Source information: Structure probing data (DMS and 2A3) for a 177-nucleotide construct. 2A3 adducts were read by reverse transcription with SuperScript II with manganese. The DMS profile rests on 10,267 reads.
RNA sequence: GGGAACGACUCGAGUAGAGUCGAAAAGAAACGGGGGAGCCACAUGUUGAGGCUAAUCUGCAGAGAAACUGCAGUAGGGAUACCUUCUGUCCCGAUGAAGGAAUACAACCCCGGAAAGAAAAAGAAAACCCUAAUAUAGCUUCGGCUAUAUUAGGGUAAAAGAAACAACAACAACAAC
Reactivity to DMS in 0.01 (KOAc 150mM, MgCl2 10mM, bicine 150mM(pH8.5), 24C), signal-to-noise 5, nucleotides 027 to 126: g010a080a090a130c010g010g000g010g000g000a060g000c000c000a060c070a120u040g010u020u010g010a210g000g000c010u000a060a130u010c000u000g000c000a000g010a300g030a120a160a130c010u000g010c010a000g010u010a080g000g020g000a120u030a050c010c010u000u000c010u010g010u000c020c010c040g010a140u040g010a010a010g000g000a150a090u010a060c050a090a160c000c000c000c010g000g000a050a090a140g010a080a050a080a110a090g000a120a050a120
Reactivity to 2A3 in 0.01 (KOAc 150mM, MgCl2 10mM, bicine 150mM(pH8.5), 24C), signal-to-noise 3, nucleotides 027 to 126: g020a010a090a020c000g000g000g000g020g020a010g010c010c000a060c040a180u100g080u120u110g040a020g020g000c020u030a010a090u090c010u000g000c020a000g080a000g050a150a040a020c000u000g000c000a000g000u030a010g040g060g020a090u180a160c000c020u010u030c010u020g100u070c020c000c000g010a040u080g000a000a010g010g010a030a060u080a110c030a040a070c000c000c000c000g000g000a010a090a000g010a020a070a000a010a000g080a020a090a050

DMS adducts were read by reverse transcription with MarathonRT. Conditions: 150 mM KOAc, 10 mM MgCl2 and 150 mM bicine (pH 8.5), 24 C.